[RMDB]
RNA sequence: GGGAACGACUCGAGUAGAGUCGAAAAGUUAUCCACCAUCCAAGCGUCGAAACUGUAUGAAAACAAGGUUUUAGUUUCACCACAUCACGUUCACCUUUUGCUUUACAUGUAUCGCGAAAUGUAAACAACUGUCAUAGAAAUUCGUUUCUAUGACAGUAAAAGAAACAACAACAACAAC
Reactivity to DMS in 0.01 (KOAc 150mM, MgCl2 10mM, bicine 150mM(pH8.5), 24C), signal-to-noise 9, nucleotides 027 to 126: g010u020u010a070u010c020c020a110c080c040a070u000c050c050a060a100g020c070g020u000c070g010a060a060a080c060u000g010u010a060u010g000a070a050a080a080c130a070a110g010g010u000u010u010u010a100g010u010u000u000c020a080c040c030a070c070a060u020c060a030c080g000u000u000c030a060c010c020u000u000u000u010g010c100u010u000u000a020c030a050u000g010u010a070u000c080g010c070g010a040a070a020u010g000u010a020a030a040c110a110
Reactivity to 2A3 in 0.01 (KOAc 150mM, MgCl2 10mM, bicine 150mM(pH8.5), 24C), signal-to-noise 9, nucleotides 027 to 126: g020u030u060a060u080c010c010a020c020c010a040u050c020c010a070a020g040c020g060u050c040g060a040a040a050c040u050g040u160a100u170g170a060a060a030a050c060a050a090g060g020u020u030u050u090a050g020u010u030u060c020a030c010c010a030c010a040u070c020a010c070g030u060u050c030a140c020c010u030u040u050u070g040c050u040u030u020a020c010a050u070g090u130a090u100c030g010c020g110a060a080a040u080g000u060a020a040a020c010a010